[RMDB]
RNA sequence: GGGAACGACUCGAGUAGAGUCGAAAAGGCCACAAGGUCGUUAAACCAGCAACCGCAGCGAGCGACGUCAUUGUAGGCAUCGCGCAGUUCUCGCAAGCCUACUCGCCUGAAGGCAAGUAUGACGAUGAGAGCGCGGUUAACGUUAUGACUCAUGGCCAAAUCCUGUUAUAUUCGUAUAACAGGAUUUAAAAGAAACAACAACAACAAC
Reactivity to DMS in 0.01 (KOAc 150mM, MgCl2 10mM, bicine 150mM(pH8.5), 24C), signal-to-noise 4, nucleotides 027 to 156: g060g030c000c000a030c050a110a110g020g000u000c010g020u000u010a030a100a080c060c040a190g010c120a050a040c000c020g030c020a230g040c010g010a230g020c000g000a020c030g020u000c020a130u000u000g020u000a050g030g000c000a090u000c070g040c020g030c070a210g010u000u000c060u000c000g020c040a110a250g000c000c010u000a020c000u000c070g000c000c000u010g000a200a200g060g010c000a090a100g030u000a040u010g010a020c020g000a110u010g000a220g000a090g040c030g030c000g020g020u000u000a010a070c030g000u000u000a090u000g010a040c000u000c100a070u000g010g010c000c010
Reactivity to 2A3 in 0.01 (KOAc 150mM, MgCl2 10mM, bicine 150mM(pH8.5), 24C), signal-to-noise 8, nucleotides 027 to 156: g000g000c010c010a040c050a080a120g030g010u020c020g020u050u110a090a060a040c050c020a020g070c040a010a010c000c000g010c030a130g020c040g070a050g080c040g070a060c010g010u010c010a040u050u120g030u060a020g010g010c020a090u120c050g000c010g000c060a070g040u180u080c080u020c080g020c020a090a010g000c000c000u000a020c010u030c060g010c010c020u210g160a250a100g020g000c010a020a010g090u090a060u060g020a020c010g010a030u150g030a040g000a000g020c000g000c000g000g000u010u000a030a010c020g000u010u030a040u080g000a000c000u020c120a050u060g000g000c000c000